[RMDB]
RNA sequence: GGGAACGACUCGAGUAGAGUCGAAAAGUCGAACAGCUCGGUGGGGAACGGGCCGGAGCCCACCCGAGUGGUGUAGGCCUUGAGAAUCCCCAGCACGGUGCCGAUGCGGGUCGGGCCGAUACCAGAGCGGUUAGGCAUUAUUCGUAAUGCCUAACCGAAAAGAAACAACAACAACAAC
Reactivity to 2A3 in 0.01 (KOAc 150mM, MgCl2 10mM, bicine 150mM(pH8.5), 24C), signal-to-noise 5, nucleotides 027 to 126: g090u070c020g040a080a030c040a070g020c040u010c020g070g020u080g010g000g000g020a080a040c030g020g030g000c020c010g130g200a080g030c030c000c000a010c000c030c020g130a120g030u150g010g030u100g020u070a030g020g000c000c000u100u190g080a090g060a130a090u060c020c000c000c000a010g010c030a010c000g050g000u110g190c030c010g020a040u140g140c110g070g060g050u010c000g000g020g000c000c020g030a040u100a080c040c020a030g030a020g090
Reactivity to DMS in 0.01 (KOAc 150mM, MgCl2 10mM, bicine 150mM(pH8.5), 24C), signal-to-noise 4, nucleotides 027 to 126: g010u020c030g010a080a170c090a150g000c000u000c010g000g030u000g020g010g000g000a020a120c100g010g000g010c030c010g010g060a300g030c070c040c050a040c040c100c130g020a090g030u010g020g000u000g000u030a260g010g020c000c020u020u000g010a130g020a190a160u010c010c000c000c010a100g000c130a090c030g000g010u010g000c000c020g020a010u020g000c120g010g000g000u020c010g010g010g020c010c010g000a100u020a050c050c050a120g000a040g020